Source: RMDB library M2PK50, as collected in RNAgym. This 177-nucleotide RNA was probed chemically with DMS and 2A3. Reactivities are rounded to 0.1 and cut off at 0 and 3. 2A3 is a SHAPE reagent: it acylates the 2'-hydroxyl of flexible nucleotides of all four kinds. For 2A3, 37,739 sequencing reads were counted.
RNA sequence: GGGAACGACUCGAGUAGAGUCGAAAAGUGGCAUACUUCGGUAUGCCACAAACCAGACGCUAUCUGGAACACGCUCUACUGCGUGAUCCCAAGUAGAUCCCAAAAGUCGUGGGUUCGCCCACGACAACAUACGAAAAGGGUUCGCCCUUUUCGUAUGAAAAGAAACAACAACAACAAC
Reactivity to DMS in 0.01 (KOAc 150mM, MgCl2 10mM, bicine 150mM(pH8.5), 24C), signal-to-noise 9, nucleotides 027 to 126: g010u000g000g020c000a000u000a000c000u000u010c210g020g010u000a000u000g000c000c000a000c000a000a040a100c050c040a060g010a070c280g010c130u010a140u000c020u000g000g010a100a190c040a030c030g000c000u010c200u010a070c100u000g010c010g010u000g000a080u000c020c000c020a060a040g010u000a030g000a150u000c010c000c010a080a110a130a090g010u000c000g020u000g000g000g010u000u000c230g010c010c000c000a000c000g010a000c000a050a090
Reactivity to 2A3 in 0.01 (KOAc 150mM, MgCl2 10mM, bicine 150mM(pH8.5), 24C), signal-to-noise 9, nucleotides 027 to 126: g000u000g010g000c000a000u010a000c010u030u050c180g060g000u000a000u000g010c000c000a000c000a000a000a000c000c000a010g030a020c100g040c140u120a050u150c010u020g000g020a060a020c010a010c030g010c000u030c040u140a120c100u090g040c000g000u010g050a060u020c000c000c010a030a010g010u020a010g020a090u050c030c020c000a030a110a020a060g000u000c000g000u000g010g010g000u020u040c220g070c010c000c000a000c000g000a000c000a000a000